RNA sequence: GGGAACGACUCGAGUAGAGUCGAAAACUGGCCUCAAGCAAUCUUCCCAUUUUGGCCCCUCAAAGUGCUGGGAUUACUGUGUCUGCCCGACAGUUAAAUGUUUUGAAAGUUGGCCGGGCAUGGUGGCCUCCACUGAGAAGUUCGCUUCUCAGUGGAGAAAAGAAACAACAACAACAAC
Reactivity to DMS in 0.01 (KOAc 150mM, MgCl2 10mM, bicine 150mM(pH8.5), 24C), signal-to-noise 1, nucleotides 027 to 126: c070u010g010g040c010c010u000c130a080a130g000c100a060a090u000c110u000u010c010c040c000a180u000u000u010u000g020g000c040c040c050c040u000c060a030a080a100g000u020g020c060u000g000g000g010a070u010u010a000c030u000g010u000g010u000c040u000g020c300c030c040g010a040c000a050g010u010u010a010a070a110u020g020u000u000u010u000g000a070a180a080g010u000u010g000g030c130c000g030g030g010c000a010u000g020g010u000g010g000c110